The record gives the reactivity of an RNA of 207 nucleotides to 2A3. High 2A3 reactivity points to a flexible backbone, as in loops and unpaired stretches.
RNA sequence: GGGAACGACUCGAGUAGAGUCGAAAAGAAAACUUUGCUGGUGGGGAAGCUAUCGCUGCCUAAUAAGCACUUUAGUUAAACCAUCACUGUGUACUGGCCAAUAAACCCAGUAUCCCGUUCGACCGAGCCCGCUUAUCGGUAUCGAAUCAACGGUCAUCCUUUCCAUAAACUUCGGUUUAUGGAAAGGAAAAGAAACAACAACAACAAC
Reactivity to 2A3 in 0.01 (KOAc 150mM, MgCl2 10mM, bicine 150mM(pH8.5), 24C), signal-to-noise 2, nucleotides 027 to 156: g000a000a100a000a020c060u160u190u200g030c100u040g010g000u020g010g030g000g010a020a030g010c000u000a000u000c020g120c280u030g020c000c000u090a160a050u210a210a000g000c000a000c020u020u000u000a020g010u090u020a090a000a000c000c000a000u010c000a000c020u020g000u000g000u060a010c000u010g000g000c030c030a140a170u190a160a050a040c020c000c000a000g010u010a050u050c030c030c010g000u020u010c010g000a010c000c000g000a000g090c020c060c110g090c210u060u100a090u150c000g000g030u030a080u040c010g000a000a050u070c060a050a030c040g090g000u070c020a080u040